[RMDB]
RNA sequence: GGGAACGACUCGAGUAGAGUCGAAAACAGGCUCACGUCGGUCGCCGCGGCGGCCGGUACUACCGCCUGAGCCGCUGUCGCGGCGGCGUCACUCAGCGACCCGGCCCCGCUGGUGGUCGCCGGUGGCUGAGGAUUUCGAGUUCGCUCGAAAUCCUCAAAAAGAAACAACAACAACAAC
Reactivity to 2A3 in 0.01 (KOAc 150mM, MgCl2 10mM, bicine 150mM(pH8.5), 24C), signal-to-noise 1, nucleotides 027 to 126: c030a030g050g010c000u010c030a000c050g100u050c030g100g010u000c000g010c010c000g010c020g020g000c020g000g040c130c000g000g000u030a010c010u040a020c000c070g010c030c030u010g030a040g020c000c000g000c000u050g060u080c050g010c000g000g000c000g000g000c000g010u010c000a010c010u100c030a000g000c000g020a040c000c000c030g000g020c030c080c020c040g100c050u210g030g120u200g030g010u060c060g010c040c000g000g040u000g000g010c010
Reactivity to DMS in 0.01 (KOAc 150mM, MgCl2 10mM, bicine 150mM(pH8.5), 24C), signal-to-noise 1, nucleotides 027 to 126: c080a070g010g000c010u000c150a110c060g000u000c140g000g040u000c000g050c000c010g010c160g000g000c000g010g000c020c000g000g030u040a030c090u020a220c180c160g000c030c030u000g000a170g040c100c000g000c020u000g000u000c120g010c010g030g000c030g030g020c000g030u000c190a180c090u030c010a050g060c000g030a030c060c000c020g000g000c060c040c070c030g000c170u060g040g050u000g000g010u000c040g060c020c000g030g000u030g000g000c020